RNA sequence: GGGAACGACUCGAGUAGAGUCGAAAAGAUAUGGACUUGGAUAGGGAGCCUAUCGGAAACGAUAGAGCGAGGAUCUAUAGAGAGUCCUAAGUCAAAAGACCUGCACGAGUUCGCUCGUGCAGGUCAAGCUUACAUUGUCGUUCGCGACAAUGUAAGCAAAAGAAACAACAACAACAAC
Reactivity to DMS in 0.01 (KOAc 150mM, MgCl2 10mM, bicine 150mM(pH8.5), 24C), signal-to-noise 1, nucleotides 027 to 126: g010a070u000a300u000g000g020a020c010u000u000g010g010a060u000a000g010g010g010a080g020c000c000u000a000u000c000g000g010a090a120a120c000g010a000u000a000g000a220g050c010g000a100g000g020a080u020c000u000a010u000a130g030a180g010a030g020u000c000c010u000a070a110g020u020c040a080a060a110a160g000a010c000c050u000g000c000a020c020g000a010g010u000u020c260g000c000u000c000g020u010g040c020a000g000g000u000c010a010a050
An RNA of 177 nucleotides, treated with DMS and read out base by base. For DMS the reverse transcriptase was MarathonRT. Reactivities are given for positions 27 through 126. The reactions ran in a buffer of 150 mM KOAc, 10 mM MgCl2 and 150 mM bicine (pH 8.5), at 24 C. In probing experiments dimethyl sulfate is read out at A N1 and C N3, which are open when not base-paired.